RNA sequence: GGGAACGACUCGAGUAGAGUCGAAAAAGAUGCUCAAUAAAACUAGGAUGAGUGAAUUAAUGCAUUAUCAUGGAGUUUAAAGACGAACUAGUUUAUGCAUAUCACGCUUGGAUAUUAAAGUAGAGUUGGGGGGCAGGAUUCGGUAGGAGAGAGUGCACUGCUAAUCCCUAUUCGUAGGGAUUAGCAGAAAAGAAACAACAACAACAAC
Reactivity to DMS in 0.01 (KOAc 150mM, MgCl2 10mM, bicine 150mM(pH8.5), 24C), signal-to-noise 1, nucleotides 027 to 156: a190g000a130u020g000c000u000c000a090a140u000a120a080a060a040c010u000a080g030g020a080u000g010a110g020u000g030a020a170u000u000a160a010u010g000c050a030u030u010a080u000c080a090u020g020g010a300g010u000u000u000a100a090a110g020a090c110g000a050a120c080u000a070g020u010u000u010a020u000g000c000a040u000a140u000c020a020c120g020c040u010u000g030g010a110u000a050u000u000a050a080a100g000u000a090g000a090g040u000u000g000g010g000g010g010g020c050a060g040g000a080u000u000c060g030g030u000a110g010g000a110g000a110g010a050g000u010g000c040a230
Reactivity to 2A3 in 0.01 (KOAc 150mM, MgCl2 10mM, bicine 150mM(pH8.5), 24C), signal-to-noise 2, nucleotides 027 to 156: a000g070a030u070g010c010u010c060a140a090u130a120a120a070a040c060u060a050g080g020a060u090g040a040g060u060g050a100a050u120u170a110a000u060g000c000a000u010u060a030u110c050a010u060g110g050a030g060u040u050u160a130a170a030g070a040c050g000a080a050c000u030a010g040u020u000u070a030u030g000c010a000u020a010u100c010a010c050g020c010u050u050g000g030a010u050a030u210u220a160a120a080g050u050a040g020a010g030u090u050g000g020g000g000g000g000c000a020g000g030a030u070u110c010g000g010u020a010g020g000a030g000a000g000a000g000u010g000c050a000
Structure probing data (DMS and 2A3) for a 207-nucleotide construct. The RNA was probed in 150 mM KOAc, 10 mM MgCl2 and 150 mM bicine (pH 8.5) at 24 C.